Structure probing data (2A3 and DMS) for a 177-nucleotide construct. For DMS, 1,126 sequencing reads were counted. Values are in units of 0.01, from 0 to 300, in steps of 10. DMS adducts were read by reverse transcription with MarathonRT. 2A3 adducts were read by reverse transcription with SuperScript II with manganese.

RNA sequence: GGGAACGACUCGAGUAGAGUCGAAAACGAUUGGUUUGCGGAAUUAGGCUUUACUUUCUUUAAUUACCACUAUACAGCAAAGUUGAUUAAAUCAUCCUAUAAUUUGAAAUGUCUACUAUUAAAAUUGGCGUGUAAUCAAAUUCGUUUGAUUACACGCAAAAGAAACAACAACAACAAC
Reactivity to 2A3 in 0.01 (KOAc 150mM, MgCl2 10mM, bicine 150mM(pH8.5), 24C), signal-to-noise 4, nucleotides 027 to 126: c050g060a070u010u090g060g070u130u120u070g030c020g050g090a180a110u060u020a070g000g000c000u070u000u030a090c020u030u070u080c040u000u170u100a050a110u040u130a070c010c000a020c040u150a070u120a210c010a010g090c030a030a140a000g010u050u000g090a030u040u170a080a020a060u050c040a050u010c000c040u140a120u120a240a200u090u070u100g090a080a070a040u070g080u000c010u020a070c030u000a100u280u160a040a070a140a160u050u100g080
Reactivity to DMS in 0.01 (KOAc 150mM, MgCl2 10mM, bicine 150mM(pH8.5), 24C), signal-to-noise 1, nucleotides 027 to 126: c050g040a090u000u000g060g020u000u000u000g020c000g000g010a070a050u030u030a120g000g000c050u000u000u000a020c030u000u000u000c050u000u060u000a100a010u000u000a100c050c000a040c300u000a050u040a180c260a140g010c110a000a040a090g010u060u000g000a090u000u020a040a050a090u000c000a010u000c140c040u000a110u060a000a070u000u010u000g000a000a070a090u040g000u000c040u000a030c070u010a130u030u000a020a090a030a160u000u020g000